Conditions: 150 mM KOAc, 10 mM MgCl2 and 150 mM bicine (pH 8.5), 24 C. The record gives the reactivity of an RNA of 207 nucleotides to 2A3 and DMS. For 2A3 the reverse transcriptase was SuperScript II with manganese. The DMS profile rests on 2,009 reads. Source: RMDB library ARCHII, as collected in RNAgym.
[RMDB]
RNA sequence: GGGAACGACUCGAGUAGAGUCGAAAAGUCCACUCUCGUAAAUCCAGGCUCAACCAAAAGUAACUGCGAACAACAUCGUUCCUUUCGCUCGUAAGGCUGCUCCUGUAGCUGCUUAAACGCCACAAACUUUCUGGCUCGAGCGUCUAGUCGUAGACUCCGAAAGGCAUUAGUUCGCUAAUGCCUUUCGAAAAGAAACAACAACAACAAC
Reactivity to 2A3 in 0.01 (KOAc 150mM, MgCl2 10mM, bicine 150mM(pH8.5), 24C), signal-to-noise 2, nucleotides 027 to 156: g040u000c000c020a070c040u030c000u010c020g040u060a070a000a060u050c010c020a030g040g040c040u030c050a110a130c050c020a090a150a000a020g110u070a110a090c030u060g000c050g050a100a070c030a020a020c000a130u050c010g020u020u010c010c000u010u130u030c010g000c010u010c000g030u050a050a030g000g020c010u060g010c010u010c050c070u160g060u110a000g020c000u000g020c000u030u020a060a100a030c050g020c000c050a050c100a070a200a140c120u130u250u120c040u030g000g000c010u020c000g000a010g030c000g010u000c020u050a000g040u010c030g050u010a040g020a030c030u030c030
Reactivity to DMS in 0.01 (KOAc 150mM, MgCl2 10mM, bicine 150mM(pH8.5), 24C), signal-to-noise 1, nucleotides 027 to 156: g050u050c020c040a090c000u000c000u000c030g030u000a080a050a060u020c020c040a190g020g000c040u000c030a110a170c090c080a040a070a150a080g010u010a070a030c030u010g010c030g050a100a070c060a130a090c110a090u010c010g000u030u000c000c000u000u010u000c030g050c030u000c060g000u010a090a230g010g020c010u000g010c030u020c030c040u000g050u020a010g020c020u000g050c020u000u000a080a080a040c070g030c000c000a090c030a070a090a100c070u000u000u000c080u000g040g000c000u000c020g000a090g020c010g000u000c120u000a060g000u010c050g010u010a100g000a100c030u010c010